[RMDB]
RNA sequence: GGGAACGACUCGAGUAGAGUCGAAAAGCUCAGUGUGUGUCGCCCCGUCGUCUAGUGCUGGUUCUAGGGCUGGGGCGUCAGCAUCCAGGUCUGACGGGACGGGCUGUAUCUCGCCAUCAACGAUAAACUCUUUAUAUGCUUUCGAGCAUAUAAAGAGAAAAGAAACAACAACAACAAC
Reactivity to 2A3 in 0.01 (KOAc 150mM, MgCl2 10mM, bicine 150mM(pH8.5), 24C), signal-to-noise 3, nucleotides 027 to 126: g030c010u010c060a080g010u030g000u040g030u020g020u100c000g020c000c000c000c000g030u030c020g050u020c010u000a010g010u020g140c100u120g170g080u140u020c000u020a020g000g060g000c070u120g050g000g000g000c000g000u000c000a000g010c010a020u060c050c040a020g030g070u020c030u080g060a070c070g050g000g020a020c010g020g020g000c010u010g020u030a090u010c030u030c020g050c040c010a150u110c050a060a040c040g040a040u150a110a090a030
Reactivity to DMS in 0.01 (KOAc 150mM, MgCl2 10mM, bicine 150mM(pH8.5), 24C), signal-to-noise 7, nucleotides 027 to 126: g010c020u000c020a140g010u010g010u000g010u010g020u000c010g010c010c000c000c010g020u000c030g000u010c010u000a020g010u000g010c100u000g000g000u000u000c010u000a030g010g000g000c030u010g020g000g000g010c010g010u000c010a080g010c020a040u000c070c060a120g010g010u000c050u010g010a070c070g000g000g000a050c060g000g000g010c030u000g000u010a070u000c030u000c030g010c070c060a070u010c130a040a050c100g000a110u010a080a070a110